Notes
Conditions: 150 mM KOAc, 10 mM MgCl2 and 150 mM bicine (pH 8.5), 24 C. An RNA of 207 nucleotides, treated with 2A3 and read out base by base. For 2A3 the reverse transcriptase was SuperScript II with manganese. Values are in units of 0.01, from 0 to 300, in steps of 10. The data come from the RNA Mapping Database (RMDB), library OK3TST.
RNA sequence: GGGAACGACUCGAGUAGAGUCGAAAAUCACGAUCUCUCACGAGAACACGAGUGAGUGUUCGAUCGUUCACACUCGUACACGUGAACACGUACUCACACGUACUCGUGUGAUCGAGAACACACUCACUCACACGUGAGUGAGUGAGAGAGUGUGUUCACCUGUCACGAGGUUCGCCUCGUGACAGGUAAAAGAAACAACAACAACAAC
Reactivity to 2A3 in 0.01 (KOAc 150mM, MgCl2 10mM, bicine 150mM(pH8.5), 24C), signal-to-noise 4, nucleotides 027 to 156: u100c020a020c040g040a020u000c070u010c010u010c050a010c010g020a000g040a140a050c050a000c150g040a050g020u010g000a010g000u020g080u130u130c030g040a140u080c100g000u010u010c000a000c000a000c020u100c090g130u270a040c110a030c140g000u000g010a020a010c060a020c090g030u070a040c000u000c000a010c000a000c060g000u020a030c000u000c010g010u000g000u020g000a010u000c010g010a010g010a050a000c020a000c000a000c000u000c010a020c010u000c000a010c010a010c030g130u130g090a140g040u050g020a040g020u020g000a010g010a010g000a010g020u030g000u000g000u000u030c040